Chemical mapping of a 177-nucleotide RNA with 2A3 and DMS. Reactivities are given for positions 27 through 126. 2A3 is a SHAPE reagent: it acylates the 2'-hydroxyl of flexible nucleotides of all four kinds. Conditions: 150 mM KOAc, 10 mM MgCl2 and 150 mM bicine (pH 8.5), 24 C. Values are in units of 0.01, from 0 to 300, in steps of 10. 2A3 adducts were read by reverse transcription with SuperScript II with manganese. For DMS the reverse transcriptase was MarathonRT.
RNA sequence: GGGAACGACUCGAGUAGAGUCGAAAAGAUAUGGAGAGAUGGGAGCGAAGAACCUGCCAAUACAGUGAAGUAUUCGGAAACGAAUAUGGAGGCUGUAUUGGCAGGGGAGCUUAGUCUCUCCUAAGUCGGAACUAUCAUUGUUCGCAAUGAUAGUUCCAAAAGAAACAACAACAACAAC
Reactivity to 2A3 in 0.01 (KOAc 150mM, MgCl2 10mM, bicine 150mM(pH8.5), 24C), signal-to-noise 1, nucleotides 027 to 126: g030a010u130a060u250g000g000a060g040a000g000a000u120g250g300g090a020g000c010g140a300a050g000a050a060c010c000u020g000c000c000a020a000u000a000c000a000g020u040g300a030a000g000u000a000u020u000c010g050g060a050a060a070c030g000a000a040u050a010u050g000g020a070g300g000c020u000g000u020a010u000u010g040g010c000a020g000g000g000g000a000g000c010u010u000a010g000u000c000u000c000u000c010c000u010a010a010g060u020c100
Reactivity to DMS in 0.01 (KOAc 150mM, MgCl2 10mM, bicine 150mM(pH8.5), 24C), signal-to-noise 2, nucleotides 027 to 126: g000a130u000a300u010g000g000a030g010a020g010a000u020g000g000g010a030g010c000g000a080a180g030a170a300c000c000u010g020c000c000a000a020u000a000c000a000g060u000g000a300a240g000u010a000u000u010c010g030g040a200a100a300c070g020a000a000u000a010u000g000g000a300g040g000c000u000g010u020a000u000u000g020g000c020a000g000g010g000g000a040g040c040u010u000a300g000u000c020u000c000u000c040c000u000a000a070g010u000c080